The record gives the reactivity of an RNA of 177 nucleotides to 2A3 and DMS. For 2A3 the reverse transcriptase was SuperScript II with manganese. It was measured as part of the RMDB library OK2TST. DMS adducts were read by reverse transcription with MarathonRT. The DMS profile rests on 1,992 reads.

[RMDB]
RNA sequence: GGGAACGACUCGAGUAGAGUCGAAAACGGGAACAUGUUCAUCGUGGUAGUGGGUAAUCACAAUGGGCGCAGGCUUCCCGUAGUCCUGUCAUCCACCGAUACCCGCACCAUCGGGGACGUGAUAAGCGCCCUGACAUUAAUUCGUUAAUGUCAGGGCAAAAGAAACAACAACAACAAC
Reactivity to 2A3 in 0.01 (KOAc 150mM, MgCl2 10mM, bicine 150mM(pH8.5), 24C), signal-to-noise 2, nucleotides 027 to 126: c020g030g060g030a040a040c020a040u040g000u030u020c050a120u100c200g020u000g000g030u040a250g010u090g020g020g010u060a200a130u020c010a000c040a070a120u020g000g020g000c040g000c020a010g030g000c020u060u060c000c010c030g000u010a000g030u100c000c010u010g070u100c000a060u020c000c010a030c020c010g010a000u010a020c000c010c010g000c010a030c000c000a030u160c030g000g000g000g010a020c000g010u020g010a090u070a140a060g090c060
Reactivity to DMS in 0.01 (KOAc 150mM, MgCl2 10mM, bicine 150mM(pH8.5), 24C), signal-to-noise 2, nucleotides 027 to 126: c060g010g000g000a080a150c040a010u000g000u000u000c010a070u020c040g070u000g020g000u000a090g060u000g010g000g000u020a050a060u000c020a050c110a080a110u000g010g020g020c210g000c040a030g000g010c050u000u000c080c090c100g020u020a020g000u010c010c010u010g040u000c050a050u000c000c000a020c100c060g000a060u000a010c020c000c020g040c000a060c030c040a030u030c050g000g010g020g000a010c020g020u010g000a070u000a100a140g020c180